RNA sequence: GGGAACGACUCGAGUAGAGUCGAAAAUAUAGAAUUUCUCAAAAUUCUUAUGGUAAGUGUUUGGCUUGUGAAAGAGAGAUUGCUAGGGAGAGACUUUUAGCUAUUCCUUAUGCUUUUUUAUGUAUUAAUAUCGAUAUGGAUUCGUCCAUAUCGAUAUAAAAGAAACAACAACAACAAC
Reactivity to DMS in 0.01 (KOAc 150mM, MgCl2 10mM, bicine 150mM(pH8.5), 24C), signal-to-noise 2, nucleotides 027 to 126: u000a120u020a070g000a070a030u000u000u000c200u010c120a170a080a060a040u000u000c010u000u010a070u000g000g020u010a030a070g000u000g020u010u000u010g010g010c060u020u000g010u000g000a080a100a080g010a110g020a090g000a040u000u000g020c070u000a050g000g000g010a060g010a070g010a100c060u010u000u020u010a070g000c020u000a090u000u000c010c000u020u000a050u010g000c020u020u000u020u000u000u000a130u040g000u010a100u010u020a070